Conditions: 150 mM KOAc, 10 mM MgCl2 and 150 mM bicine (pH 8.5), 24 C. The record gives the reactivity of an RNA of 177 nucleotides to 2A3 and DMS. Reactivities are given for positions 27 through 126.

RNA sequence: GGGAACGACUCGAGUAGAGUCGAAAAGAUAUGGAUCGUUACCUCGCUAUGAAGUAUGUUAUGGUUUCACAUAUGUCGGAAACGACAUAUGUGAAAACGUCAUAUGGAGCGAGAACGAUCCUAAGUCGAGUUAUAUUUUGUUCGCAAAAUAUAACUCAAAAGAAACAACAACAACAAC
Reactivity to 2A3 in 0.01 (KOAc 150mM, MgCl2 10mM, bicine 150mM(pH8.5), 24C), signal-to-noise 8, nucleotides 027 to 126: g040a020u140a060u270g000g000a000u010c000g010u020u090a300c040c010u060c000g010c010u250a300u300g020a030a010g020u010a000u030g060u190u300a100u160g050g040u030u050u010c000a010c000a000u000a000u000g020u000c000g030g040a080a080a060c010g010a000c000a010u010a000u000g000u000g000a000a000a000a000c000g000u010c000a000u000a000u030g010g050a010g000c000g000a010g000a000a000c000g010a000u000c000c000u010a080a020g090u070c110
Reactivity to DMS in 0.01 (KOAc 150mM, MgCl2 10mM, bicine 150mM(pH8.5), 24C), signal-to-noise 7, nucleotides 027 to 126: g010a090u010a300u010g010g010a000u000c000g010u000u010a180c300c000u000c010g030c000u000a290u010g000a120a250g000u000a000u000g010u020u020a040u000g010g010u000u000u000c000a010c000a010u000a000u000g010u000c000g010g000a140a080a210c010g010a020c000a000u000a000u000g020u000g000a000a000a010a010c000g010u000c010a010u000a010u000g010g020a020g020c000g000a010g020a010a010c000g010a010u000c000c000u000a010a100g010u010c110